The data come from the RNA Mapping Database (RMDB), library P90LIB. This 155-nucleotide RNA was probed chemically with 2A3 and DMS. Values cover nucleotides 27 to 135. The RNA was probed in 150 mM KOAc, 10 mM MgCl2 and 150 mM bicine (pH 8.5) at 24 C.
[RMDB]
RNA sequence: GGGAACGACUCGAGUAGAGUCGAAAAGCAAAAUAAGCGAGCAAAGGUAAAAGCCGCAAAUGGUAAUAAAAUAGUAGAAACAAGCGGAGAAGAUCGCAAAAACCACCAUAAAAAUAACCUGGCUUUCGAGCUAGGAAAAGAAACAACAACAACAAC
Reactivity to 2A3 in 0.01 (KOAc 150mM, MgCl2 10mM, bicine 150mM(pH8.5), 24C), signal-to-noise 5, nucleotides 027 to 135: g040c010a010a030a040a150u150a110a020g010c000g030a010g000c030a060a060a030g030g010u140a040a040a020a010g010c000c000g000c010a000a030a070u080g030g020u050a040a030u070a100a130a030a040u150a040g130u040a030g080a050a070a020c040a060a010g000c010g010g010a040g020a050a020g030a040u050c010g000c000a010a050a060a020a030c030c030a020c010c010a030u130a060a070a000a010a000u060a020a020c000c000u000g000g010c000u020u030u040c090g050a000g000c010u000a000g000g000a030
Reactivity to DMS in 0.01 (KOAc 150mM, MgCl2 10mM, bicine 150mM(pH8.5), 24C), signal-to-noise 4, nucleotides 027 to 135: g030c130a070a070a060a060u020a090a090g000c010g020a050g020c050a050a090a090g020g000u020a050a080a030a120g030c000c010g010c000a030a060a030u010g010g000u020a060a060u030a030a040a040a050u030a070g000u010a050g000a020a060a080c060a070a070g000c000g000g000a060g000a090a090g000a040u010c000g020c010a030a020a030a040a070c070c040a040c080c050a060u040a000a050a050a030a060u010a030a110c030c010u010g000g000c010u000u010u030c110g020a010g010c020u000a000g000g020a040